[RMDB]
RNA sequence: GGGAACGACUCGAGUAGAGUCGAAAAAUUGCUUGAGCCUAGGAGGUCAAGGCUCCAGUGAGCUUCAGGACCAGCUCCAGGCUGGGGAUUUGGGCCAUUUCAUUAACUUCAUAUCCUUUCUUAGUGCUACUUCAAGAUCCCCCUUGGACCUAGCAGAGCAAAACAACUUAUUCGUAAGUUGUUUUGCAAAAGAAACAACAACAACAAC
Reactivity to 2A3 in 0.01 (KOAc 150mM, MgCl2 10mM, bicine 150mM(pH8.5), 24C), signal-to-noise 4, nucleotides 027 to 156: a020u030u080g000c010u050u060g060a010g000c010c000u050a180g050g000a040g030g030u090c060a070a040g020g000c000u000c040c020a120g040u130g170a020g010c000u130u110c130a090g050g040a030c010c010a030g030c010u000c030c030a050g060g000c020u030g000g050g000g000a020u140u100u120g070g010g000c050c010a040u050u080u070c090a080u080u170a090a090c040u170u110c070a110u100a150u300c040c000u110u140u060c060u070u090a060g040u070g030c000u010a060c010u030u000c000a000a020g000a200u050c020c000c000c000c010u000u020g000g000a010c010c010u020a000g000c020a020g040a000
Reactivity to DMS in 0.01 (KOAc 150mM, MgCl2 10mM, bicine 150mM(pH8.5), 24C), signal-to-noise 2, nucleotides 027 to 156: a040u000u010g000c020u030u000g000a100g010c020c010u010a080g030g010a160g030g010u000c020a190a100g010g000c000u000c000c050a240g030u000g030a040g010c000u000u010c050a130g030g000a040c030c020a080g040c050u000c030c090a080g030g030c020u010g040g010g020g000a070u000u000u000g020g020g060c000c010a150u000u020u010c080a130u000u000a040a100c050u010u000c050a070u010a050u000c040c050u000u000u000c030u000u000a070g010u000g000c020u010a020c050u000u010c010a060a020g010a080u000c010c000c010c030c040u010u000g000g010a040c090c040u000a040g030c040a090g040a250